[RMDB]
The record gives the reactivity of an RNA of 207 nucleotides to 2A3 and DMS. The 2A3 profile rests on 3,453 reads. The data come from the RNA Mapping Database (RMDB), library RNAMAK. The reactions ran in a buffer of 150 mM KOAc, 10 mM MgCl2 and 150 mM bicine (pH 8.5), at 24 C. For DMS the reverse transcriptase was MarathonRT.

RNA sequence: GGGAACGACUCGAGUAGAGUCGAAAACGCUGGGUCAUGACUAACUUGUUGACGAAACUACUGAAGCGCGCACGGUAGAAUUUCGAUGGAGUUAGACAUGACCUGUGCUGAAGCGCGCACGGCAACCGAAAGGUGCGAUGACGGUGGUUCGCCACCGACCUUUACGCUUGUUCGCAAGCGUAAAGGUAAAAGAAACAACAACAACAAC
Reactivity to 2A3 in 0.01 (KOAc 150mM, MgCl2 10mM, bicine 150mM(pH8.5), 24C), signal-to-noise 2, nucleotides 027 to 156: c070g000c020u060g010g000g000u000c020a020u000g060a080c000u000a000a000c000u060u060g080u190u180g300a090c050g020a050a050a020c000u010a000c020u030g040a220a040g050c000g000c010g000c020a020c020g050g000u020a010g070a300a300u010u030u050c060g060a130u180g170g010a030g000u000u000a000g020a060c000a000u000g010a000c000c010u000g000u020g010c010u080g020a070a010g000c000g000c000g040c000a010c010g080g000c050a120a090c010c010g030a120a050a020g000g000u030g010c030g050a070u170g070a040c020g020g000u010g000g050u070u080c160g030c060c000a000c010c000g020
Reactivity to DMS in 0.01 (KOAc 150mM, MgCl2 10mM, bicine 150mM(pH8.5), 24C), signal-to-noise 1, nucleotides 027 to 156: c050g000c000u000g010g010g030u000c000a010u000g040a240c000u000a010a010c000u000u000g000u000u000g010a190c040g010a120a050a140c000u000a010c020u000g000a080a060g060c040g000c020g020c010a300c050g000g000u000a010g030a120a150u000u000u000c020g010a100u000g060g010a020g000u020u010a010g030a210c020a030u000g020a010c040c000u000g020u000g040c010u000g000a060a120g030c020g000c030g000c000a300c050g030g030c020a060a120c010c000g020a060a030a200g000g000u000g030c000g000a110u010g000a100c050g020g010u020g020g000u010u000c230g000c000c010a020c000c010g000